Chemical mapping of a 177-nucleotide RNA with DMS and 2A3.

[RMDB]
RNA sequence: GGGAACGACUCGAGUAGAGUCGAAAACAAGGAGGCGAGGGUUGCGAGCUCCGAUAUCCUCAUUGUGACGAAAGACUCGGGUAUGAACGAGUCGGGGCUCUACUUCACGGUACACGCCCUGGAUCCGUCGUCCUCAAAUAUUCGUAUUUGAGGACGAAAAAGAAACAACAACAACAAC
Reactivity to DMS in 0.01 (KOAc 150mM, MgCl2 10mM, bicine 150mM(pH8.5), 24C), signal-to-noise 6, nucleotides 027 to 126: c070a090a060g020g010a030g050g000c070g020a080g000g010g000u000u000g020c240g010a100g020c020u000c010c010g000a100u000a080u000c010c050u000c030a060u000u010g010u000g020a200c060g000a120a110a140g000a070c090u000c000g020g000g010u000a080u000g000a060a090c280g010a050g010u000c000g000g010g010g020c010u000c120u000a030c020u000u000c230a130c260g000g000u000a060c160a100c190g000c010c000c000u000g000g000a150u000c030c040g010
Reactivity to 2A3 in 0.01 (KOAc 150mM, MgCl2 10mM, bicine 150mM(pH8.5), 24C), signal-to-noise 4, nucleotides 027 to 126: c020a030a070g040g010a030g050g080c030g080a070g040g040g010u080u120g070c070g020a020g000c010u000c010c000g020a020u030a180u140c010c020u010c010a020u040u160g070u110g110a070c070g060a130a110a110g090a070c040u010c030g030g020g060u170a080u150g030a100a030c030g000a000g000u010c000g000g000g000g010c000u030c010u030a060c000u050u140c070a010c100g050g000u060a040c060a010c130g000c000c000c030u020g080g010a070u010c030c010g050

Source: RMDB library OK2TRN, as collected in RNAgym. Conditions: 150 mM KOAc, 10 mM MgCl2 and 150 mM bicine (pH 8.5), 24 C. The DMS profile rests on 5,534 reads. For 2A3 the reverse transcriptase was SuperScript II with manganese. Values are in units of 0.01, from 0 to 300, in steps of 10.